[RMDB]
RNA sequence: GGGAACGACUCGAGUAGAGUCGAAAAGGAUGCUGAAGCGGGUCAGCAUGUCGCUGCCCACACGUACCUGGGCUGCCUCCGUCAGCACCCGCCCAUCAAAGUCCGUCAGCACUUUGGUGUGGCUGCUACCUAGGUGCUUUUGGUAGAACCAGACUACAUAACCCCCAAUAUUCGUAUUGGGGGUUAUAAAAGAAACAACAACAACAAC
Reactivity to 2A3 in 0.01 (KOAc 150mM, MgCl2 10mM, bicine 150mM(pH8.5), 24C), signal-to-noise 2, nucleotides 027 to 156: g000g040a000u020g000c010u020g020a110a070g100c080g020g050g040u110c030a020g060c060a050u150g110u110c060g000c070u080g020c000c070c000a040c010a010c040g110u070a050c000c010u020g000g000g000c010u010g020c000c010u100c040c050g090u060c070a010g020c000a030c000c030c020g030c000c010c000a000u000c000a030a000a000g010u050c040c100g160u090c080a030g050c090a010c010u000u000u000g020g000u100g050u160g000g000c010u050g000c010u060a110c010c060u060a040g010g010u040g000c000u040u040u040u150g000g000u030a000g010a040a010c000c020a010g070a040c040u200a020c090
Reactivity to DMS in 0.01 (KOAc 150mM, MgCl2 10mM, bicine 150mM(pH8.5), 24C), signal-to-noise 2, nucleotides 027 to 156: g020g000a040u020g010c050u010g000a050a130g060c020g010g040g020u010c030a040g070c020a060u000g020u000c080g030c090u000g020c020c020c010a060c020a050c100g020u010a050c050c010u010g010g020g030c020u010g010c020c020u010c060c070g000u000c060a030g000c020a040c030c020c060g010c000c020c000a030u000c000a000a010a020g020u000c040c050g050u010c190a140g030c070a040c010u000u000u000g020g000u000g000u010g060g050c060u010g050c050u010a050c020c060u010a100g000g000u000g000c010u000u000u010u010g010g020u000a030g010a030a120c030c030a110g030a090c040u000a100c110

Structure probing data (2A3 and DMS) for a 207-nucleotide construct. Source: RMDB library OK3TST, as collected in RNAgym. DMS adducts were read by reverse transcription with MarathonRT.